[RMDB]
RNA sequence: GGGAACGACUCGAGUAGAGUCGAAAAGAUAUGGAUGAUAGACAUGAAUGGACAUCGGAAACGAUGUAGAGUUCAACAGCUAUAUCCUAAGUCAAAACGGAUACUGUUGUUCGCAACAGUAUCCGAAGCGUGUUGUGUUGUUCGCAACACAACACGCAAAAGAAACAACAACAACAAC
Reactivity to DMS in 0.01 (KOAc 150mM, MgCl2 10mM, bicine 150mM(pH8.5), 24C), signal-to-noise 1, nucleotides 027 to 126: g000a060u000a300u010g000g000a060u000g000a000u000a000g000a080c150a160u010g030a000a020u000g000g020a090c060a000u000c000g000g000a090a120a250c020g030a010u000g020u030a020g000a160g000u000u000c000a150a060c300a170g000c000u000a070u000a040u000c000c000u000a070a040g000u010c030a020a080a110a240c000g000g000a010u000a000c000u000g000u000u000g000u000u000c240g020c000a010a000c000a000g000u000a000u010c000c000g000a000a000
Reactivity to 2A3 in 0.01 (KOAc 150mM, MgCl2 10mM, bicine 150mM(pH8.5), 24C), signal-to-noise 1, nucleotides 027 to 126: g050a050u050a040u190g020g020a070u070g070a040u110a060g050a030c090a080u060g040a010a030u060g000g000a000c010a000u000c000g000g010a100a060a060c020g030a000u010g010u030a040g050a040g160u010u030c050a090a060c040a060g000c000u030a000u000a010u000c000c000u040a170a070g080u030c030a010a010a060a160c030g030g000a020u000a000c000u000g030u000u010g070u060u090c300g000c090a000a000c020a000g000u000a000u030c000c000g000a030a010
Record summary
Structure probing data (DMS and 2A3) for a 177-nucleotide construct. For DMS, 635 sequencing reads were counted.